[RMDB]
RNA sequence: GGGAACGACUCGAGUAGAGUCGAAAAAUGGGGGUGGAACUCAUGAUGGAAUUGGAGCCUUUACAAGGGAAUGAAGAGACAAGAGCUCUCUUUAUGCCACGUGAGGAUACAGCAAGGCCCCAAUCUGUCCUAGGUAGACGUUCGCGUCUACCUAGGAAAAAGAAACAACAACAACAAC
Reactivity to 2A3 in 0.01 (KOAc 150mM, MgCl2 10mM, bicine 150mM(pH8.5), 24C), signal-to-noise 1, nucleotides 027 to 126: a000u100g000g000g000g040g000u080g010g060a040a000c000u020c010a040u100g070a090u010g020g060a040a060u050u120g080g010a050g120c000c040u080u060u010a210c190a130a080g060g040g060a070a000u100g010a000a050g010a000g010a000c070a130a150g070a020g210c010u020c020u000c000u040u000u000a070u050g040c000c000a020c020g000u000g000a050g030g030a080u130a200c020a030g090c050a070a030g070g050c000c000c060c000a000a040u040c020u020g060
Reactivity to DMS in 0.01 (KOAc 150mM, MgCl2 10mM, bicine 150mM(pH8.5), 24C), signal-to-noise 2, nucleotides 027 to 126: a040u000g000g010g020g020g030u010g010g000a140a260c040u000c020a050u000g000a120u000g000g020a070a100u010u000g000g010a060g040c020c030u020u010u010a110c200a110a080g030g010g010a060a010u000g000a010a010g000a010g000a000c010a180a120g030a240g020c140u010c000u000c000u000u000u000a000u000g010c000c000a030c110g010u010g010a090g010g020a130u010a230c110a140g020c150a050a110g010g000c000c000c000c000a040a020u000c070u000g000
This 177-nucleotide RNA was probed chemically with 2A3 and DMS. It was measured as part of the RMDB library OK2TRN. DMS (dimethyl sulfate) methylates the pairing face of unpaired adenines and cytosines. For 2A3 the reverse transcriptase was SuperScript II with manganese. The reactions ran in a buffer of 150 mM KOAc, 10 mM MgCl2 and 150 mM bicine (pH 8.5), at 24 C. For DMS, 1,169 sequencing reads were counted.